About this RNA
Structure probing data (DMS and 2A3) for a 177-nucleotide construct. In probing experiments dimethyl sulfate is read out at A N1 and C N3, which are open when not base-paired. The reactions ran in a buffer of 150 mM KOAc, 10 mM MgCl2 and 150 mM bicine (pH 8.5), at 24 C. 2A3 is a SHAPE reagent: it acylates the 2'-hydroxyl of flexible nucleotides of all four kinds. For 2A3 the reverse transcriptase was SuperScript II with manganese.

RNA sequence: GGGAACGACUCGAGUAGAGUCGAAAAUACCAAUGGUUCGCCAUUGGUACUUGUAUUGACGAAUACUACCGAAGAAGUAUUCAGGUCUCAUAACUACGGAUAUACACUAGAGUUUCGACUCUAGUAAACCUAAUCGUCGGUUCGCCGACGAUUAGGUAAAAGAAACAACAACAACAAC
Reactivity to DMS in 0.01 (KOAc 150mM, MgCl2 10mM, bicine 150mM(pH8.5), 24C), signal-to-noise 1, nucleotides 027 to 126: u000a000c020c000a000a000u000g000g010u020u010c250g080c000c000a010u010u010g010g000u000a010c060u010u000g020u010a110u000u010g090a110c170g010a000a000u000a010c000u000a090c060c140g000a060a070g020a060a050g000u010a000u000u000c040a080g010g010u010c050u010c100a150u000a050a130c040u010a070c080g010g000a140u020a140u000a070c150a030c010u010a000g000a050g030u000u000u010c270g010a030c000u000c000u010a000g020u000a010a050
Reactivity to 2A3 in 0.01 (KOAc 150mM, MgCl2 10mM, bicine 150mM(pH8.5), 24C), signal-to-noise 2, nucleotides 027 to 126: u040a010c020c000a010a000u010g000g010u030u070c160g030c070c000a010u010u010g020g000u010a030c010u050u150g080u050a160u090u190g100a000c060g020a000a000u010a020c010u050a060c000c160g070a060a020g020a070a020g050u010a000u020u010c050a070g060g040u010c020u000c050a150u100a130a110c070u110a050c090g040g010a040u020a000u000a150c040a000c040u020a000g000a020g030u010u100u040c140g120a020c000u000c000u000a000g010u010a030a000